[RMDB]
The record gives the reactivity of an RNA of 177 nucleotides to DMS and 2A3. The 2A3 profile rests on 1,442 reads. For DMS, 1,645 sequencing reads were counted. The RNA was probed in 150 mM KOAc, 10 mM MgCl2 and 150 mM bicine (pH 8.5) at 24 C.
RNA sequence: GGGAACGACUCGAGUAGAGUCGAAAAGGUUCGAGAUUCGUCUCGAACCAAAUAAAAUCAGCGGUAAAUAAUUAGCUCCCCUUACCGCUGAACGGGAGCAUAUGGUCACUUGUUUCGACAAGUGAAAACUCAGCUAUUUGUUCGCAAAUAGCUGAGUAAAAGAAACAACAACAACAAC
Reactivity to DMS in 0.01 (KOAc 150mM, MgCl2 10mM, bicine 150mM(pH8.5), 24C), signal-to-noise 2, nucleotides 027 to 126: g000g000u000u000c000g010a040g010a050u000u000c280g020u000c000u000c000g000a000a000c000c010a000a030a040u000a020a050a130a120u010c000a000g020c000g000g010u000a020a060a140u000a060a050u030u010a150g000c030u000c000c010c050c220u000u000a040c000c000g000c000u010g000a010a060c210g000g030g000a070g000c060a170u010a070u020g000g000u010c000a000c000u000u000g000u000u000u010c180g020a000c000a010a000g000u000g000a010a030a130
Reactivity to 2A3 in 0.01 (KOAc 150mM, MgCl2 10mM, bicine 150mM(pH8.5), 24C), signal-to-noise 1, nucleotides 027 to 126: g010g000u000u010c000g000a000g000a070u020u090c120g030u020c100u000c010g010a000a000c000c000a000a000a000u030a000a020a000a110u010c000a000g050c000g020g060u030a010a090a100u130a050a300u230u190a100g030c020u000c000c010c020c000u000u030a010c000c000g020c000u000g000a000a010c000g030g000g000a040g030c010a050u070a040u190g130g010u020c000a000c010u010u010g000u000u080u060c100g050a010c000a020a000g000u000g030a000a000a000